This 177-nucleotide RNA was probed chemically with 2A3 and DMS. The reactions ran in a buffer of 150 mM KOAc, 10 mM MgCl2 and 150 mM bicine (pH 8.5), at 24 C. The 2A3 profile rests on 1,564 reads. Reactivities are given for positions 27 through 126. For DMS the reverse transcriptase was MarathonRT. High DMS reactivity at an A or C suggests that its Watson-Crick edge is free.
RNA sequence: GGGAACGACUCGAGUAGAGUCGAAAACCUACUGCCUUCGGGCAGUAGGAAACAGGUGCUUCUACAACCUGAAUAUCUAGAUGAAACAUCUAGUGUAGAAGAAAAGGAACCGCUUCGGCGGUUCCAAGAGUACUAAUGCGUUCGCGCAUUAGUACUCAAAAGAAACAACAACAACAAC
Reactivity to 2A3 in 0.01 (KOAc 150mM, MgCl2 10mM, bicine 150mM(pH8.5), 24C), signal-to-noise 1, nucleotides 027 to 126: c000c000u000a000c000u000g000c000c000u010u070c150g060g000g020c000a010g000u010a000g000g000a020a050a000c010a000g050g030u020g000c020u040u010c000u000a010c000a030a050c010c000u020g050a060a050u120a070u090c010u010a000g000a020u000g070a240a250a080c020a040u000c000u000a020g030u000g000u040a020g010a050a000g000a020a150a000a030g000g000a000a010c010c000g000c000u040u100c230g140g000c000g000g000u000u000c010c010a000a000
Reactivity to DMS in 0.01 (KOAc 150mM, MgCl2 10mM, bicine 150mM(pH8.5), 24C), signal-to-noise 1, nucleotides 027 to 126: c000c000u000a010c000u000g000c000c020u000u010c160g040g000g040c000a010g000u010a000g010g000a040a060a270c010a010g000g020u000g020c050u000u000c000u010a040c030a140a030c050c020u020g000a170a090u010a040u040c000u000a000g000a000u010g000a210a090a110c100a020u000c000u000a000g000u010g000u000a010g000a020a030g000a120a060a120a140g000g000a020a000c010c000g020c000u000u010c160g030g030c000g020g000u000u010c010c000a000a030